[RMDB]
RNA sequence: GGGAACGACUCGAGUAGAGUCGAAAAGGUAUCGCUGGUGCUAUUAAUGCGGCUUCAAAAGGGGCUGUCCAAAAAGAGUCAGAUGAGUAUAUUCUGGCUAAAGGGCCGUUACAAGUAGGAGAUUCAGACACCUGUUAGUUCGCUAACAGGAAAAGAAACAACAACAACAAC
Reactivity to 2A3 in 0.01 (KOAc 150mM, MgCl2 10mM, bicine 150mM(pH8.5), 24C), signal-to-noise 7, nucleotides 027 to 129: g070g020u070a040u120c060g000c050u040g010g060u070g010c040u040a020u140u160a130a060u130g020c010g000g000c000u060u050c050a060a070a040a090g010g010g010g000c030u060g020u060c020c020a030a100a060a010a010g140a010g020u020c000a000g010a020u060g050a070g240u070a070u020a040u280u020c000u000g010g000c000u000a040a030a010g000g000g000c010c000g000u010u010a040c020a050a010g010u020a010g030g020a030g000a030u050u090c030a010g010a030c030a030
Reactivity to DMS in 0.01 (KOAc 150mM, MgCl2 10mM, bicine 150mM(pH8.5), 24C), signal-to-noise 8, nucleotides 027 to 129: g020g040u000a050u040c120g000c040u020g000g010u040g030c020u020a120u000u060a080a100u040g020c070g020g000c010u000u020c080a040a070a120a100g030g000g020g030c030u030g030u040c070c050a030a060a060a070a060g030a020g030u020c000a000g000a000u000g030a090g040u030a120u060a070u070u010c010u000g000g000c010u010a020a090a090g000g010g000c020c080g020u040u000a020c090a030a020g030u030a040g050g020a030g000a070u050u040c050a080g000a130c120a100
This 170-nucleotide RNA was probed chemically with 2A3 and DMS. The data come from the RNA Mapping Database (RMDB), library 15KLIB. For 2A3 the reverse transcriptase was SuperScript II with manganese. For DMS, 43,741 sequencing reads were counted. 2A3 is a SHAPE reagent: it acylates the 2'-hydroxyl of flexible nucleotides of all four kinds.